[RMDB]
RNA sequence: GGGAACGACUCGAGUAGAGUCGAAAAAUUCUUCUGCGUCAUUACACCAAACAAUCCAUGACAUUCAUCAAUAAUAAAUGUCGCUACGCCAUCAUGAUUUAUCAGUGACCGACCGAUAUCUUUUGAUGAUGCAAUUCGACCAAAGACAUGCAUACCCCUACCAGGUACGUUUCGACGUACCUGGUAGAAAAGAAACAACAACAACAAC
Reactivity to 2A3 in 0.01 (KOAc 150mM, MgCl2 10mM, bicine 150mM(pH8.5), 24C), signal-to-noise 5, nucleotides 027 to 156: a000u080u020c030u080u050c060u060g060c040g040u020c020a070u060u120a060c070a070c060c070a100a120a090c060a090a090u080c070c030a090u120g050a110c020a050u090u090c020a040u070c040a090a120u170a150a030u140a090a130a030u060g000u020c010g020c090u070a050c050g030c030c000a030u040c010a020u060g060a060u060u110u120a060u070c030a010g030u010g140a170c040c050g050a010c020c010g010a020u000a010u060c040u030u080u030u040g040a040u000g030a040u050g030c010a030a140u140u070c060g020a020c030c020a000a060a040g040a030c030a050u060g010c010a040u080a160c000c010c000
Reactivity to DMS in 0.01 (KOAc 150mM, MgCl2 10mM, bicine 150mM(pH8.5), 24C), signal-to-noise 1, nucleotides 027 to 156: a090u010u000c020u000u000c010u010g040c080g030u020c060a140u000u010a130c050a060c030c040a060a040a090c140a110a070u000c080c090a140u000g000a060c000a020u000u000c060a010u000c000a060a050u000a190a170u010a010a040a060u020g070u000c000g040c100u000a080c050g060c010c000a070u010c020a060u010g000a120u020u000u000a050u020c000a010g000u000g040a100c050c020g040a040c140c010g020a040u000a010u000c060u010u030u000u020g010a170u030g000a050u010g030c040a050a150u040u020c000g020a060c000c060a050a090a090g000a010c070a120u010g000c050a130u000a140c000c040c030